[RMDB]
Structure probing data (2A3) for a 207-nucleotide construct.
It was measured as part of the RMDB library M2RFPK.
2A3 adducts were read by reverse transcription with SuperScript II with manganese.
RNA sequence: GGGAACGACUCGAGUAGAGUCGAAAAGACGCCUUUAGAAGAAGAGGCUAGGGGGUAUUCCGGUGUGGGAUACUUAGUAAUAUGCUACGCUAAUUGCAUAAGAUUGUAGGACGGAAUUUACAGUCUUUAGAGAUAAGCACGUUCGCGUGCUUAUCAACGCUACGCCUCGAUUCGUCGAGGCGUAGCGAAAAGAAACAACAACAACAAC
Reactivity to 2A3 in 0.01 (KOAc 150mM, MgCl2 10mM, bicine 150mM(pH8.5), 24C), signal-to-noise 1, nucleotides 027 to 156: g130a010c060g010c000c020u060u070u020a240g020a250a030g000a220a000g020a040g070g010c050u090a120g020g000g010g000g000u010a020u000u040c080c070g120g120u150g020u100g100g000g020a000u040a030c020u000u070a020g010u020a000a090u000a100u060g060c000u020a020c050g060c040u020a110a050u150u020g000c050a080u010a060a090g000a000u020u000g000u020a000g040g040a000c040g050g040a020a050u060u080u040a050c030a010g000u020c000u020u050u060a220g020a000g000a060u000a000a000g000c000a030c020g070u090u020c140g020c010g040u000g020c000u000u000a000u010c000a000a010
The reactions ran in a buffer of 150 mM KOAc, 10 mM MgCl2 and 150 mM bicine (pH 8.5), at 24 C.